[RMDB]
RNA sequence: GGGAACGACUCGAGUAGAGUCGAAAAGAAAACAAGUACCGAGAACAUUGUUUUCGCUGCUUGGCGUUGCCGUUUUGUGUUGCAGUUGGUUGGGUAACGCCGCAAAUACCAACCGUACAGAGAGAUAAUAUAUACUAGGCUUCGGCCUAGUAUAUAUAAAAGAAACAACAACAACAAC
Reactivity to DMS in 0.01 (KOAc 150mM, MgCl2 10mM, bicine 150mM(pH8.5), 24C), signal-to-noise 5, nucleotides 027 to 126: g020a060a030a150a150c010a020a010g010u000a040c260c010g000a040g010a030a020c020a170u040u040g010u000u000u000u000c000g010c170u000g000c000u000u010g000g000c030g010u010u020g000c010c010g020u020u020u020u010g030u010g000u020u010g020c060a070g010u000u010g010g000u000u010g000g010g000u000a050a100c160g020c030c030g000c090a030a060a060u030a040c010c010a010a010c010c030g020u000a060c080a110g010a120g010a080g000a100u020a100
Reactivity to 2A3 in 0.01 (KOAc 150mM, MgCl2 10mM, bicine 150mM(pH8.5), 24C), signal-to-noise 3, nucleotides 027 to 126: g010a000a010a000a010c020a010a010g010u030a050c010c040g030a020g050a050a020c090a300u220u270g020u010u010u000u000c000g000c020u010g000c010u000u030g000g000c020g030u010u010g020c000c010g040u020u050u160u160g240u050g030u090u140g030c050a040g020u020u040g030g020u050u150g040g020g000u030a050a000c020g000c010c000g010c000a040a050a010u250a050c020c020a000a000c000c010g020u090a020c090a020g100a020g040a000g040a120u120a300